RNA sequence: GGGAACGACUCGAGUAGAGUCGAAAACUCCUAGCCCUCACGUGCAUCUCAGGGAGCGCGGGCUUUACCACACGGAGGUGAAACUGGAGAAGCGUCGGAGUGUCCUUGAGGCACUGGCCGAGUGCACCGAGGUUGGUUCGUUCGCGGGCCGACUUCGAAAAGAAACAACAACAACAAC
Reactivity to DMS in 0.01 (KOAc 150mM, MgCl2 10mM, bicine 150mM(pH8.5), 24C), signal-to-noise 9, nucleotides 027 to 126: c090u010c010c010u000a130g000c110c030c020u000c040a110c070g010u000g000c070a090u020c050u010c080a110g000g000g000a210g010c030g010c130g010g000g010c030u010u010u020a100c030c030a160c060a070c070g010g020a090g000g000u010g010a060a070a090c130u020g000g000a290g010a090a090g010c020g000u010c020g000g000a070g010u000g000u000c000c010u020u020g010a110g000g000c000a010c010u010g000g010c040c030g010a090g000u010g010c020a120c130
Reactivity to 2A3 in 0.01 (KOAc 150mM, MgCl2 10mM, bicine 150mM(pH8.5), 24C), signal-to-noise 9, nucleotides 027 to 126: c020u000c000c010u020a030g010c020c010c000u020c010a180c040g010u030g020c020a170u050c060u030c090a050g020g020g010a020g010c070g000c040g030g070g000c000u020u030u050a090c020c010a020c000a010c050g110g030a080g100g000u040g030a100a110a040c060u060g030g010a060g020a070a010g010c010g090u080c020g030g030a090g030u030g090u010c010c000u060u150g060a180g000g000c000a000c000u060g070g040c030c040g010a020g030u070g010c010a020c030